[RMDB]
RNA sequence: GGGAACGACUCGAGUAGAGUCGAAAAGACGAGCAGGCCGAUAAUCUUGUGCAGUAUGCAUGCUCGUAACUCCAGCGCACAAGUGGACGCACAAGAUUUCAAUCCAGCAUAGCGCAGGAGCCGCAGAAUAUGAGUGAUGGUUCGCCAUCACUCAUAUAAAAGAAACAACAACAACAAC
Reactivity to DMS in 0.01 (KOAc 150mM, MgCl2 10mM, bicine 150mM(pH8.5), 24C), signal-to-noise 5, nucleotides 027 to 126: g010a040c000g000a020g000c000a020g010g040c030c300g000a060u040a050a050u010c020u000u010g000u010g000c010a170g020u030a090u010g030c020a040u000g030c020u030c000g000u010a070a120c020u000c010c020a080g010c010g060c010a090c240a120a100g010u010g000g000a100c160g030c000a020c000a010a010g010a110u020u040u030c200a170a130u010c020c060a060g010c120a110u020a070g000c020g000c000a100g000g010a010g010c020c010g000c230a070g010a180
Reactivity to 2A3 in 0.01 (KOAc 150mM, MgCl2 10mM, bicine 150mM(pH8.5), 24C), signal-to-noise 4, nucleotides 027 to 126: g090a010c000g000a000g000c010a000g000g070c060c070g080a100u150a160a040u050c000u010u010g000u030g010c070a130g070u180a050u120g020c020a010u030g000c010u000c010g000u010a000a010c000u000c000c000a000g000c020g020c000a020c040a210a090g130u050g050g010a030c090g000c000a000c010a000a010g020a020u060u090u110c130a070a050u060c040c010a010g010c040a190u160a130g000c010g000c020a020g000g000a010g030c020c020g040c030a050g130a170